[RMDB]
RNA sequence: GGGAACGACUCGAGUAGAGUCGAAAACAGGAAACUGGUUAAUCGUUUUCCUUGGUAGUAUAGCGGAAACCAUAAAUAAGAAGAACUCUAAGUGUUUGAGUAGAGUUAAAAUAAUUAGACAGGCAAUUAAGGUACUCCACGUUCGCGUGGAGUACAAGCAAUAGACAUAGUUCGCUAUGUCUAUUGCAAAAGAAACAACAACAACAAC
Reactivity to 2A3 in 0.01 (KOAc 150mM, MgCl2 10mM, bicine 150mM(pH8.5), 24C), signal-to-noise 6, nucleotides 027 to 156: c020a010g000g070a060a030a020c050u100g020g080u130u130a110a070u140c040g000u010u030u070u070c030c020u030u040g060g000u020a060g010u020a050u060a120g040c030g020g040a030a040a040c030c000a030u100a120a090a020u130a090a030g080a040a010g020a040a010c000u000c000u030a030a020g050u020g060u240u100u090g020a030g010u020a000g000a000g010u050u080a010a030a000a000u080a020a020u120u020a010g020a030c020a010g010g050c010a010a040u110u100a180a040g060g000u000a000c000u000c000c010a010c000g010u040u040c180g010c010g100u000g000g000a000g000u010a000c000a000a000
Reactivity to DMS in 0.01 (KOAc 150mM, MgCl2 10mM, bicine 150mM(pH8.5), 24C), signal-to-noise 2, nucleotides 027 to 156: c080a100g040g020a070a040a130c020u010g030g010u000u010a170a070u000c060g030u000u000u000u000c000c000u000u030g020g020u000a090g000u000a130u000a060g010c000g030g000a070a080a050c050c000a080u010a040a060a130u020a120a090g020a140a160g000a070a080c010u000c010u020a050a130g000u000g030u000u000u010g010a140g010u000a020g000a080g000u000u000a040a070a050a080u000a030a120u000u000a040g010a140c040a070g020g030c020a040a070u000u010a050a090g000g050u000a030c000u000c000c000a000c010g030u000u010c300g080c050g020u000g020g000a030g010u000a000c040a030a090

Conditions: 150 mM KOAc, 10 mM MgCl2 and 150 mM bicine (pH 8.5), 24 C. An RNA of 207 nucleotides, treated with 2A3 and DMS and read out base by base. Values cover nucleotides 27 to 156. It was measured as part of the RMDB library M2RFPK. The 2A3 profile rests on 5,798 reads. 2A3 adducts were read by reverse transcription with SuperScript II with manganese.